[RMDB]
An RNA of 207 nucleotides, treated with 2A3 and read out base by base. Values cover nucleotides 27 to 156. It was measured as part of the RMDB library VIROID.

RNA sequence: GGGAACGACUCGAGUAGAGUCGAAAACCAGCGGGGGCGUGGAGAGAGGGCCGCGGUGCUCUGGAGUAGAGGCUCUGCCUUCGAAACACCAUCGAUCGUCCCUUCUUCUUUACCUUCUCCUGGCUCUUCCGAUGAGACGCGACCGGUGGCAUCACCUUCUUAUUGUUGCGUUCGCGCAACAAUAAGAAAAAGAAACAACAACAACAAC
Reactivity to 2A3 in 0.01 (KOAc 150mM, MgCl2 10mM, bicine 150mM(pH8.5), 24C), signal-to-noise 1, nucleotides 027 to 156: c010c000a010g040c100g020g000g010g020g000c060g000u030g010g000a000g000a000g000a020g000g000g000c020c000g070c010g000g040u010g030c020u030c010u000g030g000a010g010u020a000g000a000g000g000c040u050c200u300g030c040c010u150u250c010g010a000a000a020c000a020c140c000a000u000c010g050a300u030c010g000u010c000c000c000u020u060c000u020u000c000u000u040u010a000c010c000u030u080c030u020c020c010u000g030g000c030u040c020u130u000c060c060g040a140u130g030a020g020a040c030g000c070g160a050c040c030g030g040u020g040g020c070a050u140c000a120c000c050u050